[RMDB]
RNA sequence: GGGAACGACUCGAGUAGAGUCGAAAAUUUACAUCGGAAGUCGGCACAACACCGGACUCGCGGUGAGCGAUGCAGCGUAGCUUAUGCUACGCAGCUGCUGUGCGGAGGGCUAGCAAAGGCUAGCCUAAUAAAUCCGUCGGUUCGCCGACGGAUUUAUAAAAGAAACAACAACAACAAC
Reactivity to DMS in 0.01 (KOAc 150mM, MgCl2 10mM, bicine 150mM(pH8.5), 24C), signal-to-noise 2, nucleotides 027 to 126: u000u050u030a170c100a110u030c060g050g000a090a030g010u050c060g010g010c020a030c120a100a060c110a070c000c000g000g000a060c130u030c070g010c010g030g030u000g010a110g040c010g000a080u050g000c010a030g010c010g010u030a000g000c020u000u060a110u050g020c030u000a000c000g030c020a020g020c000u010g020c030u000g000u000g000c000g010g000a050g000g000g000c000u020a000g000c000a180a100a130g010g010c020u000a000g000c000c000u000a000
Reactivity to 2A3 in 0.01 (KOAc 150mM, MgCl2 10mM, bicine 150mM(pH8.5), 24C), signal-to-noise 2, nucleotides 027 to 126: u110u140u140a170c150a080u170c160g030g040a080a000g040u000c000g000g000c000a000c020a210a210c000a000c010c000g030g220a250c070u050c070g120c000g030g000u020g020a000g010c020g030a190u220g000c000a000g000c000g000u000a000g010c000u290u270a090u300g000c000u000a000c000g000c060a010g000c020u010g000c010u000g030u040g090c060g000g020a030g070g000g030c030u040a000g020c110a280a210a020g300g000c000u020a000g000c000c000u000a000
Structure probing data (DMS and 2A3) for a 177-nucleotide construct.
The data come from the RNA Mapping Database (RMDB), library OK1LIB.
For 2A3, 784 sequencing reads were counted.
DMS adducts were read by reverse transcription with MarathonRT.
The RNA was probed in 150 mM KOAc, 10 mM MgCl2 and 150 mM bicine (pH 8.5) at 24 C.
The DMS profile rests on 2,504 reads.